[RMDB]
RNA sequence: GGGAACGACUCGAGUAGAGUCGAAAAUUGAAAACAGUCAGCUGGUGGUGCUGUUCGGCAAUAACCCCGGCGAAACGCGGAUGAGCGGCGGCGGGGUGACGUACUACCUUGAACAGGCGCGGCAGAAACUCACUAGUCGUUUCGACGACUAGUGAGUAAAAGAAACAACAACAACAAC
Reactivity to 2A3 in 0.01 (KOAc 150mM, MgCl2 10mM, bicine 150mM(pH8.5), 24C), signal-to-noise 4, nucleotides 027 to 126: u070u050g030a010a000a000a020c060a060g140u120c050a000g000c010u050g080g240u080g030g000u140g180c020u010g060u080u000c030g070g040c060a040a010u070a100a050c000c000c030c000g130g000c000g030a100a190a040c020g000c010g000g250a240u220g070a190g080c050g080g000c010g010g060c000g010g030g000g000u000g040a010c030g010u040a060c010u070a060c000c000u040u130g000a070a020c000a070g020g000c020g000c000g010g000c010a020g110a090a080
Reactivity to DMS in 0.01 (KOAc 150mM, MgCl2 10mM, bicine 150mM(pH8.5), 24C), signal-to-noise 3, nucleotides 027 to 126: u070u010g000a060a060a100a050c090a090g000u000c050a090g020c020u000g000g040u040g000g020u000g000c010u010g020u010u000c060g010g000c130a090a090u000a080a030c010c000c030c000g010g010c000g010a020a050a070c000g000c020g000g020a200u050g030a170g010c010g020g010c000g000g010c000g040g000g010g000u000g000a030c190g000u010a110c120u010a050c060c050u030u020g000a010a020c090a030g000g000c030g000c000g010g000c020a060g000a100a120